The record gives the reactivity of an RNA of 207 nucleotides to 2A3 and DMS. Reactivities are given for positions 27 through 156. The RNA was probed in 150 mM KOAc, 10 mM MgCl2 and 150 mM bicine (pH 8.5) at 24 C. For 2A3 the reverse transcriptase was SuperScript II with manganese.
RNA sequence: GGGAACGACUCGAGUAGAGUCGAAAAAACUACACGGCACUUAUAUUGAGUGUUAUGAAAAUGGUAAGCGCCGAUUUAUGACUCAAUAUAUUAACGGUAAUCGGUAUGGUUUAGGCACCGACACCGUUGAAUAUCACGAAAAUGGCCACAUCGCGCGCGAAGUUAAUCUGUUCGCAGAUUAACUUCGAAAAGAAACAACAACAACAAC
Reactivity to 2A3 in 0.01 (KOAc 150mM, MgCl2 10mM, bicine 150mM(pH8.5), 24C), signal-to-noise 3, nucleotides 027 to 156: a000a000c090u140a040c060a020c040g010g010c000a010c020u120u050a060u110a120u300u120g010a010g000u010g010u050u030a050u110g090a030a030a040a110u090g030g020u100a130a040g040c020g000c040c050g030a000u000u060u130a140u110g010a020c010u040c090a110a020u050a000u010a020u060u040a000a000c000g000g000u040a060a070u040c000g000g020u060a060u110g050g090u080u190u240a180g100g010c050a010c020c000g000a000c000a000c010c000g000u000u000g000a020a010u050a010u070c050a020c130g120a070a050a030a090u100g030g020c000c000a030c010a030u020c010g020c010g000c010g000
Reactivity to DMS in 0.01 (KOAc 150mM, MgCl2 10mM, bicine 150mM(pH8.5), 24C), signal-to-noise 2, nucleotides 027 to 156: a060a080c020u000a240c030a070c050g030g020c020a040c020u000u000a170u000a080u010u010g030a020g020u000g020u010u000a040u010g010a030a140a070a120u000g000g000u010a080a150g010c010g020c030c010g010a050u000u000u010a050u000g000a030c020u010c070a050a060u000a020u000a060u000u000a010a020c000g000g010u000a160a040u000c010g030g000u000a050u010g040g030u000u010u000a110g050g020c040a070c000c000g000a010c100a030c010c000g000u000u010g010a020a030u000a040u000c070a280c080g030a070a080a060a090u000g000g020c000c000a060c150a040u000c020g010c030g070c040g020